[RMDB]
RNA sequence: GGGAACGACUCGAGUAGAGUCGAAAAUUUAACGCUGUUUUAUUGGCGCAAAGGUUUACGGAUAAACAACUAAUAAUUAAACCUUUUGUGUGCGAAACGUGGUCGUUUAACGUACUCUUUAAUCGCUUUGGGGAUGUGUCCUUCGGGACACAUCCAACGCUAUAUCUAAGUUCGCUUAGAUAUAGCGAAAAGAAACAACAACAACAAC
Reactivity to 2A3 in 0.01 (KOAc 150mM, MgCl2 10mM, bicine 150mM(pH8.5), 24C), signal-to-noise 6, nucleotides 027 to 156: u040u030u020a040a000c010g000c030u020g090u080u050u030u080a160u130u130g080g010c010g000c000a010a010a010g020g000u010u020u040a050c070g040g060a140u190a210a200a040c060a070a020c080u150a070a150u140a150a050u130u070a030a010a020c000c000u000u050u080u080g030u000g000u070g050c020g020a050a020a010c060g050u090g060g070u200c020g000u040u020u060a050a020c020g020u040a030c010u010c020u100u090u140a110a100u150c090g040c160u120u100u130g130g050g000g010a000u010g000u000g000u010c000c000u000u020c140g070g000g000a000c000a000c000a000u010c000c000a000a000
Reactivity to DMS in 0.01 (KOAc 150mM, MgCl2 10mM, bicine 150mM(pH8.5), 24C), signal-to-noise 2, nucleotides 027 to 156: u000u000u020a060a110c010g020c000u000g030u000u000u000u000a080u020u010g020g010c030g090c120a110a070a090g030g000u000u020u000a040c100g010g030a210u010a060a080a080c020a010a140c050u000a080a100u000a120a180u010u000a060a050a020c000c010u010u010u000u000g050u000g010u000g000c020g010a100a060a070c080g030u000g030g030u000c050g000u000u000u000a030a080c030g010u020a020c040u000c040u020u000u000a090a080u000c020g020c020u010u010u000g010g040g020g040a030u010g010u000g000u000c000c000u000u000c300g040g000g030a000c000a010c010a020u000c010c000a010a020